[RMDB]
RNA sequence: GGGAACGACUCGAGUAGAGUCGAAAAGCUUCCUCUUGGCGCGGAGGUUUAACUGCGCUCGUUCCCCAUAUCGGUGUGGGCGCACCGGAUUUACAAAUUAAAGUCCUUUAGGGAGCGGAAAGGGACAAAAACUUGCACGUGUUCGCACGUGCAAGAACGAUAGAUUCCCGUUCGCGGGAAUCUAUCGAAAAGAAACAACAACAACAAC
Reactivity to 2A3 in 0.01 (KOAc 150mM, MgCl2 10mM, bicine 150mM(pH8.5), 24C), signal-to-noise 1, nucleotides 027 to 156: g030c020u210u090c000c000u040c000u010u000g000g040c000g000c010g040g000a010g010g030u100u110u000a040a020c000u040g010c020g000c010u000c000g000u000u000c010c000c010c000a000u070a040u160c030g000g000u000g010u030g020g030g000c100g020c040a010c030c010g020g000a010u100u150u050a170c150a050a130a020u100u180a130a100a000g010u010c000c000u010u010u010a050g000g000g000a030g030c020g030g000a070a040a030g030g030g050a030c080a000a090a010a030a050c000u000u000g000c000a040c000g000u000g000u000u020c070g010c050a000c010g000u030g000c000a000a000g000a000a000